[RMDB]
RNA sequence: GGGAACGACUCGAGUAGAGUCGAAAACGCAGCGGGUGUUGCAGGCCUGUGUGGCGCAGCUGUGGCGGCGGCCGGUGGAUCUUGAAGCCACGCUGCUGAAGCCAAUGAUGGUCAUGCCAGGCGCGGAGACGCUAGAGCGAUUCGUCGCUCUAGCGUCAAAAGAAACAACAACAACAAC
Reactivity to DMS in 0.01 (KOAc 150mM, MgCl2 10mM, bicine 150mM(pH8.5), 24C), signal-to-noise 1, nucleotides 027 to 126: c080g000c000a110g020c000g000g000g010u010g010u030u000g040c040a070g010g000c020c000u000g000u010g020u000g010g010c050g000c050a010g020c020u020g040u000g010g000c020g010g010c220g000g010c040c050g040g010u020g010g000a080u010c080u000u000g020a170a120g000c010c010a020c010g000c010u010g000c020u010g000a090a130g010c010c000a070a120u000g000a060u010g010g020u000c010a110u000g020c040c050a080g010g010c020g020c090g000g020a170
Reactivity to 2A3 in 0.01 (KOAc 150mM, MgCl2 10mM, bicine 150mM(pH8.5), 24C), signal-to-noise 1, nucleotides 027 to 126: c060g080c050a060g020c050g050g150g030u190g080u090u150g050c070a080g000g050c020c000u090g060u070g000u010g070g000c080g030c050a000g010c000u160g030u030g050g000c000g000g000c020g000g040c000c020g130g200u130g010g020a080u040c080u100u210g200a040a040g000c000c000a000c020g050c010u050g000c020u030g050a090a000g000c000c000a090a050u120g110a090u120g030g000u040c040a090u050g020c040c040a030g010g000c030g020c010g070g010a080